RNA sequence: GGGAACGACUCGAGUAGAGUCGAAAACGAUCAUGGACGUACAGGCCCAUGUACCGAAAGCCCAGAAUAUACAGAAUGUAUCGAAGCCCUGAUGUUCCCCGUGGAUGUGAAGGCCCAUGUAAAGUCCGACCACUAUGCGAUUCGUCGCAUAGUGGUCAAAAGAAACAACAACAACAAC
Reactivity to 2A3 in 0.01 (KOAc 150mM, MgCl2 10mM, bicine 150mM(pH8.5), 24C), signal-to-noise 3, nucleotides 027 to 126: c010g020a010u040c000a030u020g020g030a000c030g000u210a090c060a100g010g030c020c000c000a000u070g010u000a090c000c050g070a160a050a000g020c000c000c000a000g110a070a050u150a000u020a030c050a000g110a090a160u180g070u130a030u030c050g010a050a020g010c010c000c000u090g030a110u130g050u010u070c000c000c000c050g000u000g050g060a080u050g000u040g090a120a010g070g000c020c010c000a020u060g010u110a060a000a150g000u000c050c070
Reactivity to DMS in 0.01 (KOAc 150mM, MgCl2 10mM, bicine 150mM(pH8.5), 24C), signal-to-noise 2, nucleotides 027 to 126: c040g000a010u000c040a010u020g000g000a040c100g000u000a000c170a110g010g000c060c000c000a060u000g000u010a050c080c090g030a090a070a200g000c000c000c030a040g000a090a080u030a040u010a060c070a130g000a100a100u000g080u020a100u000c000g000a150a060g080c020c030c000u000g050a130u030g020u020u000c050c000c010c000g010u000g040g010a150u000g000u000g010a040a250g000g000c030c000c010a080u000g000u020a070a100a100g000u000c080c100
Conditions: 150 mM KOAc, 10 mM MgCl2 and 150 mM bicine (pH 8.5), 24 C. This 177-nucleotide RNA was probed chemically with 2A3 and DMS. DMS adducts were read by reverse transcription with MarathonRT. For DMS, 1,755 sequencing reads were counted.